[RMDB]
RNA sequence: GGGAACGACUCGAGUAGAGUCGAAAAGACACUUUCGAGUGUCAAAGCUUCCUAAGUCCGUUCAACAGCUUGGUGGGACAUGGCUUAUCGGAAACGAUAAGCCAACAGCCCAUCCAAGACAUGAACGGAUAUGGACGAGUACGAGCUUCGGCUCGAAAAAUAAUGGAGUUUUCGAACUCCAUUAUUUAAAAGAAACAACAACAACAAC
Reactivity to DMS in 0.01 (KOAc 150mM, MgCl2 10mM, bicine 150mM(pH8.5), 24C), signal-to-noise 4, nucleotides 027 to 156: g010a020c000a010c010u010u000u010c210g020a050g020u000g010u000c010a020a070a090g010c030u000u000c010c010u000a150a280g020u000c000c000g040u000u010c000a030a090c040a270g010c000u000u000g020g040u010g010g020g040a030c050a300u010g030g000c000u000u000a010u010c020g000g010a200a130a300c020g010a010u010a010a010g020c000c010a010a020c040a110g000c000c000c010a040u010c010c010a010a010g010a020c040a300u000g010a000a020c010g010g010a000u000a030u000g020g010a080c030g000a170g020u010a140c020g010a050g020c030u000u010c220g060g000c000u000c000g000a000a080
Reactivity to 2A3 in 0.01 (KOAc 150mM, MgCl2 10mM, bicine 150mM(pH8.5), 24C), signal-to-noise 4, nucleotides 027 to 156: g010a000c010a000c010u140u160u270c280g090a030g020u010g000u000c000a010a040a020g030c050u050u020c000c000u010a110a050g050u010c000c000g000u000u010c020a070a060c040a230g050c010u010u000g000g010u010g000g010g040a050c020a100u040g000g010c010u000u000a000u000c000g040g000a090a050a060c010g000a000u000a000a000g010c000c000a000a010c010a000g000c010c000c000a070u030c030c000a000a000g010a020c020a080u060g000a000a000c000g000g000a000u010a000u010g010g020a020c070g030a030g090u160a070c010g000a000g020c010u080u210c290g100g000c010u000c000g040a030a050